[RMDB]
RNA sequence: GGGAACGACUCGAGUAGAGUCGAAAAAUAAAAGAAAAUUCAUGGUUUAAGAAGGAAGAGUAUGUGGAACAUGUCUCUGAUGCCACGAUGUAAUAACCUUGAAAACAAAGUAAAAUUACACUAAUGACAACUAAUGCGUUUUCGAACGCAUUAGUUGAAAAGAAACAACAACAACAAC
Reactivity to 2A3 in 0.01 (KOAc 150mM, MgCl2 10mM, bicine 150mM(pH8.5), 24C), signal-to-noise 1, nucleotides 027 to 126: a030u080a000a120a010a020g070a030a170a000a030u090u040c030a040u050g040g030u010u160u030a190a070g040a070a080g110g040a000a070g010a000g040u130a050u150g080u080g050g060a090a070c000a010u030g170u050c000u000c000u120g050a040u140g060c050c030a000c050g090a060u100g060u040a120a010u050a060a020c000c000u010u010g050a060a050a060a080c060a050a070a000g000u080a040a050a110a020u080u090a030c050a020c010u090a140a160u090g020a010
Reactivity to DMS in 0.01 (KOAc 150mM, MgCl2 10mM, bicine 150mM(pH8.5), 24C), signal-to-noise 2, nucleotides 027 to 126: a060u020a110a060a080a080g000a120a060a160a060u040u000c010a000u000g010g010u000u000u000a190a170g010a100a140g010g040a160a020g020a050g020u010a020u000g050u000g000g000a000a300c030a050u000g010u010c020u000c020u010g010a170u020g010c070c040a000c160g000a160u070g010u020a030a020u000a040a030c030c020u000u010g000a060a030a080a090c060a070a020a060g000u000a010a060a060a020u000u000a030c050a050c190u010a090a060u010g010a200